[RMDB]
An RNA of 207 nucleotides, treated with DMS and 2A3 and read out base by base. Values cover nucleotides 27 to 156. For 2A3, 1,688 sequencing reads were counted. For DMS the reverse transcriptase was MarathonRT. High 2A3 reactivity points to a flexible backbone, as in loops and unpaired stretches.
RNA sequence: GGGAACGACUCGAGUAGAGUCGAAAAAGCAUGCGAAAGGAUGGCAUAUCUAGAUGAAUACCUGGUACCAGGAUGGGAAAGCAUGCAGCCACUGACUGAAUAUUAACGCCUUGGCGCCACGUACGGAAACCAUCCCCAUCCGAAACGUACGUGUUAGGUCAGAGAGUAUGUUCGCAUACUCUCUGACAAAAGAAACAACAACAACAAC
Reactivity to DMS in 0.01 (KOAc 150mM, MgCl2 10mM, bicine 150mM(pH8.5), 24C), signal-to-noise 1, nucleotides 027 to 156: a100g050c000a000u000g000c050g000a080a190a220g010g000a100u030g020g040c100a030u000a020u000c020u000a070g010a140u010g020a200a160u030a070c040c060u000g020g000u000a080c080c110a000g000g020a050u000g000g000g000a090a050a130g010c040a020u020g000c000a110g030c000c020a070c070u010g010a040c050u020g050a170a140u000a170u010u050a140a120c100g020c040c020u030u000g010g020c160g030c020c040a010c000g010u010a000c000g000g010a050a050a170c000c070a060u010c000c000c000c060a000u000c020c060g030a060a100a100c050g000u000a020c000g010u000g000u000u000a060g010
Reactivity to 2A3 in 0.01 (KOAc 150mM, MgCl2 10mM, bicine 150mM(pH8.5), 24C), signal-to-noise 3, nucleotides 027 to 156: a000g010c010a020u020g030c040g040a090a000a000g020g020a010u030g020g000c060a050u020a020u150c110u120a090g010a200u100g100a210a030u100a180c020c040u030g010g030u090a030c060c060a040g010g000a030u020g000g000g030a140a000a000g000c000a010u010g000c010a000g000c000c000a030c030u040g170a050c020u030g080a130a070u250a110u300u100a110a000c070g030c000c000u020u040g040g000c080g020c040c000a010c000g000u000a010c000g020g070a100a040a000c010c000a030u040c000c010c010c000a010u000c000c000g000a070a060a010c000g000u000a000c000g030u020g060u020u070a030g000